[RMDB]
RNA sequence: GGGAACGACUCGAGUAGAGUCGAAAACGCUGGACGCGGUCCGUGAAACCAAAGCUGCCACCUGGGAAUUAGACAACGUCGAUGCGUCUGACGACGGGCUGGUGGACUAUUCGGGUCCGCUGGUGUCACGCGUCGUUAAGUUCGCUUAACGACGCGUAAAAGAAACAACAACAACAAC
Reactivity to 2A3 in 0.01 (KOAc 150mM, MgCl2 10mM, bicine 150mM(pH8.5), 24C), signal-to-noise 2, nucleotides 027 to 126: c020g020c010u070g020g020a020c130g000c020g070g000u000c030c030g030u040g100a090a060a050c140c010a130a010a020g030c020u090g010c020c010a040c010c010u040g000g110g040a100a120u020u080a060g000a000c000a090a030c150g160u140c080g080a110u190g070c000g040u010c070u100g080a000c000g000a000c010g010g000g000c110u010g000g000u000g000g040a100c040u070a120u030u230c080g010g000g060u070c000c000g000c010u010g000g020u040g000u020c060
Reactivity to DMS in 0.01 (KOAc 150mM, MgCl2 10mM, bicine 150mM(pH8.5), 24C), signal-to-noise 1, nucleotides 027 to 126: c070g100c020u000g010g010a070c000g000c110g050g050u000c010c000g020u040g000a120a090a050c040c040a050a120a130g020c000u020g040c000c000a090c020c010u020g000g000g000a080a040u000u000a010g000a130c100a140a030c030g090u000c070g000a060u000g060c090g000u030c000u020g050a050c080g020a170c010g010g000g050c150u000g000g010u000g060g020a010c000u000a190u040u110c120g070g010g000u000c000c000g060c020u000g060g000u010g000u000c120